The data come from the RNA Mapping Database (RMDB), library M2RFOK. This 207-nucleotide RNA was probed chemically with 2A3. The RNA was probed in 150 mM KOAc, 10 mM MgCl2 and 150 mM bicine (pH 8.5) at 24 C. Reactivities are given for positions 27 through 156.
RNA sequence: GGGAACGACUCGAGUAGAGUCGAAAAUGCGCUACCAGUAAGCGAAAAAUGAUACAGGACGAAAAAAACAUAAUUCGAGAUUUUUCAGGAUGGAUUUUUUUAGGUAUCUAUCAAAACUAUUCUGAUGCAACGUAGAGCACGUUCGCGUGCUCUACAAGAGUACUAGGACCUUCGGGUCCUAGUACUCAAAAGAAACAACAACAACAAC
Reactivity to 2A3 in 0.01 (KOAc 150mM, MgCl2 10mM, bicine 150mM(pH8.5), 24C), signal-to-noise 1, nucleotides 027 to 156: u030g010c000g030c010u020a010c090c000a030g020u050a050a000g020c000g060a010a020a020a020a000u120g020a030u040a070c150a120g070g050a060c110g070a000a000a000a030a080a060a000c020a030u070a040a070u030u020c070g030a070g010a130u040u060u060u070u260c000a000g050g000a010u010g010g000a040u010u030u030u000u000u000u000a060g030g040u070a080u300c010u070a080u020c000a000a000a040a000c000u010a030u000u000c000u020g030a030u050g010c050a030a060c060g000u000a000g010a000g000c020a010c000g000u020u020c100g020c020g020u000g000c010u000c000u010a000c000a000a000